An RNA of 177 nucleotides, treated with DMS and read out base by base. Reactivities are given for positions 27 through 126. The RNA was probed in 150 mM KOAc, 10 mM MgCl2 and 150 mM bicine (pH 8.5) at 24 C. For DMS, 829 sequencing reads were counted. It was measured as part of the RMDB library OK2TRN.
RNA sequence: GGGAACGACUCGAGUAGAGUCGAAAAUCAGUACACAUUUAUUAAGCACCCCCUGUGUCAGUAAAUGCUCCAGCAUAUAAAGAUUAGUGAGACCCAGGCUCGUCAGGAUGUGAUCUCAAGUAUCACAAUUAUUACCCCACUUCGGUGGGGUAAUAAUAAAAGAAACAACAACAACAAC
Reactivity to DMS in 0.01 (KOAc 150mM, MgCl2 10mM, bicine 150mM(pH8.5), 24C), signal-to-noise 1, nucleotides 027 to 126: u010c050a110g000u000a120c130a050c020a000u000u050u010a090u020u010a140a160g000c040a110c040c090c010c070c050u000g010u000g000u000c030a140g000u000a040a060a050u000g010c050u010c110c070a070g020c050a060u010a100u010a070a110a060g010a050u010u010a060g020u010g000a050g000a060c020c020c010a040g010g010c060u000c030g000u020c060a090g020g000a160u000g030u020g000a020u000c030u020c270a060a100g000u010a040u000c010a000c050a100